This 177-nucleotide RNA was probed chemically with 2A3 and DMS. The reactions ran in a buffer of 150 mM KOAc, 10 mM MgCl2 and 150 mM bicine (pH 8.5), at 24 C. For DMS the reverse transcriptase was MarathonRT. Reactivities are given for positions 27 through 126. It was measured as part of the RMDB library TTRDEL.

[RMDB]
RNA sequence: GGGAACGACUCGAGUAGAGUCGAAAAGAUAUGGAUCUCAUAUUAGCGAAGAACUCGGAAACGAGGGAGCUGGGUAUAGAUCCUAAGUCAAAACAAACUUCUAUUGCUUCGGCAAUAGAAGUUUGAAGCGUAUUAACCAGUUCGCUGGUUAAUACGCAAAAGAAACAACAACAACAAC
Reactivity to 2A3 in 0.01 (KOAc 150mM, MgCl2 10mM, bicine 150mM(pH8.5), 24C), signal-to-noise 1, nucleotides 027 to 126: g050a060u100a070u150g000g030a030u010c010u020c100a000u000a020u090u110a000g000c000g230a300a050g030a120a090c000u000c010g040g010a070a030a060c000g010a020g000g000g000a000g050c000u130g170g150g000u040a030u010a010g020a020u000c000c000u010a160a090g000u050c070a000a000a000a150c010a050a020a000c000u000u070c020u030a000u000u010g000c010u000u050c200g160g020c000a000a000u000a000g030a010a020g000u000u010u000g010a000a000
Reactivity to DMS in 0.01 (KOAc 150mM, MgCl2 10mM, bicine 150mM(pH8.5), 24C), signal-to-noise 1, nucleotides 027 to 126: g010a030u000a300u010g020g000a030u000c010u000c120a000u010a010u010u010a020g000c000g040a050a140g040a140a190c010u010c000g000g020a110a110a300c000g000a010g040g010g000a090g010c000u000g000g030g040u020a020u010a020g000a010u000c000c000u000a040a090g010u000c040a060a020a070a300c000a010a000a000c000u000u000c000u000a010u000u000g000c000u000u010c270g010g010c010a010a000u000a010g000a010a010g000u000u010u000g000a090a130